Source information: Chemical mapping of a 177-nucleotide RNA with 2A3 and DMS. The 2A3 profile rests on 8,797 reads. DMS adducts were read by reverse transcription with MarathonRT.
RNA sequence: GGGAACGACUCGAGUAGAGUCGAAAAAAAGAUAUGGACCAACUGGAGCGACAAUGUGACCGAAGAACAGCGUCGGAAACGACGCUGGGAGGUCAUGAUCGCUAUGAAGGUUGGUCCUAAGUCAAAAUCAUAUUGCUUUGUUCGCAAAGCAAUAUGAAAAAGAAACAACAACAACAAC
Reactivity to 2A3 in 0.01 (KOAc 150mM, MgCl2 10mM, bicine 150mM(pH8.5), 24C), signal-to-noise 3, nucleotides 027 to 126: a000a000a000g070a050u080a060u160g010g010a000c000c000a000a000c010u030g040g060a010g000c010g010a000c020a070a100u150g000u000g020a000c010c020g220a300a040g010a090a030c000a000g000c000g010u000c000g030g000a040a050a020c020g000a000c000g000c010u000g000g000g000a010g000g000u000c010a010u030g060a040u000c000g040c010u080a300u130g040a020a020g000g010u000u000g030g000u000c010c000u010a000a000g020u000c030a020a000a010a250
Reactivity to DMS in 0.01 (KOAc 150mM, MgCl2 10mM, bicine 150mM(pH8.5), 24C), signal-to-noise 4, nucleotides 027 to 126: a070a060a050g000a050u010a300u010g000g000a010c000c000a010a020c000u000g000g010a010g020c020g010a010c090a140a060u010g030u000g000a020c000c000g020a100a160g000a160a220c010a000g010c010g040u000c010g000g000a080a130a200c010g000a010c010g000c000u000g020g000g010a100g010g000u000c000a010u000g000a050u000c010g020c000u000a160u010g010a160a140g000g000u000u000g010g000u000c010c010u000a000a080g010u000c030a060a060a130a130